[RMDB]
RNA sequence: GGGAACGACUCGAGUAGAGUCGAAAAGAAGAGCAGGCAGAUAAUCUUGUGCAGUAUGCAUGCUCGUACCUCCACAGGAAGAAAGGCAGCAAAAGAAUAACUGCCACUGCACAAGUGGAGCCGCAGAGGACCCUAAUAGGUUCGCCUAUUAGGGUCCAAAAGAAACAACAACAACAAC
Reactivity to 2A3 in 0.01 (KOAc 150mM, MgCl2 10mM, bicine 150mM(pH8.5), 24C), signal-to-noise 3, nucleotides 027 to 126: g070a060a030g000a010g000c020a010g020g000c020a000g080a200u160a200a140u160c000u000u060g010u000g000c000a000g000u130a020u220g000c000a030u020g000c000u010c030g040u050a080c000c000u050c030c060a140c090a060g110g060a120a070g100a090a160a000g000g000c000a000g000c030a020a010a070a130g180a080a170u140a150a000c000u020g000c000c000a000c000u000g000c000a000c000a040a000g000u000g000g000a000g060c000c000g040c110a020g050a030
Reactivity to DMS in 0.01 (KOAc 150mM, MgCl2 10mM, bicine 150mM(pH8.5), 24C), signal-to-noise 2, nucleotides 027 to 126: g000a110a060g010a030g050c000a000g010g000c000a190g010a060u040a110a050u010c010u000u010g000u000g010c140a000g010u040a040u020g000c030a050u000g000c000u000c000g000u040a200c010c070u000c010c070a200c050a040g050g020a110a150g000a060a080a080g010g000c010a030g010c150a050a060a070a150g000a200a140u010a020a180c000u000g000c000c030a200c000u000g000c000a000c000a090a010g000u000g000g020a000g030c010c110g050c050a010g030a190